[RMDB]
RNA sequence: GGGAACGACUCGAGUAGAGUCGAAAAGAUAUGGAGGACAGCAUCGAUCUACAGGUCGGAAACGACCUAAAGAGUGUAGGGAGCUGUUUCCUAAGUCAAAAGACCCAUCGGUUCGCCGAUGGGUCAAGCAAACAAGAAAGUUCGCUUUCUUGUUUGCAAAAGAAACAACAACAACAAC
Reactivity to DMS in 0.01 (KOAc 150mM, MgCl2 10mM, bicine 150mM(pH8.5), 24C), signal-to-noise 3, nucleotides 027 to 126: g000a020u000a160u000g000g010a020g010g000a020c010a010g020c010a190u000c040g010a070u000c000u000a050c300a030g010g000u000c020g020g000a060a040a120c010g010a000c000c000u010a020a110a050g000a050g030u020g010u000a050g010g020g000a030g010c000u000g010u000u000u000c000c000u000a070a130g000u010c020a070a060a170a190g000a010c000c000c000a000u000c000g010g010u000u000c190g010c010c000g020a000u000g000g000g000u000c000a000a050